[RMDB]
RNA sequence: GGGAACGACUCGAGUAGAGUCGAAAAGAUAUGGAGCUCCUACCCACCGAGUCCUACCUGCAGCUAAGACAGUCGGUCGGAAACGACCGAUCGAGCUGAAGUAGGACUCGAGGGAGCUCCUAAGUCAUCAUAACCAUUUGUUCGCAAAUGGUUAUGAAAAAGAAACAACAACAACAAC
Reactivity to DMS in 0.01 (KOAc 150mM, MgCl2 10mM, bicine 150mM(pH8.5), 24C), signal-to-noise 4, nucleotides 027 to 126: g020a160u040a240u020g030g020a020g000c010u000c000c010u000a170c040c030c040a300c100c010g010a010g000u000c000c000u000a030c010c070u010g010c000a010g010c000u010a270a180g010a080c300a080g000u000c000g010g030u010c010g000g010a140a100a140c000g020a000c000c000g000a000u000c010g010a030g010c010u000g010a090a070g000u000a010g000g000a000c000u000c000g000a010g020g000g000a000g000c000u000c000c010u000a000a080g010u010c110a150
Reactivity to 2A3 in 0.01 (KOAc 150mM, MgCl2 10mM, bicine 150mM(pH8.5), 24C), signal-to-noise 2, nucleotides 027 to 126: g100a050u260a300u300g000g000a000g030c000u000c010c000u100a300c070c000c010a040c020c000g000a000g000u010c000c010u000a040c010c040u300g240c000a000g000c000u150a300a000g100a150c050a060g020u000c020g000g050u000c000g000g000a080a150a050c000g000a000c000c030g000a000u010c010g070a000g000c020u000g000a000a000g000u000a010g010g030a000c010u000c000g000a000g010g020g010a020g020c010u000c000c010u010a010a000g000u020c040a070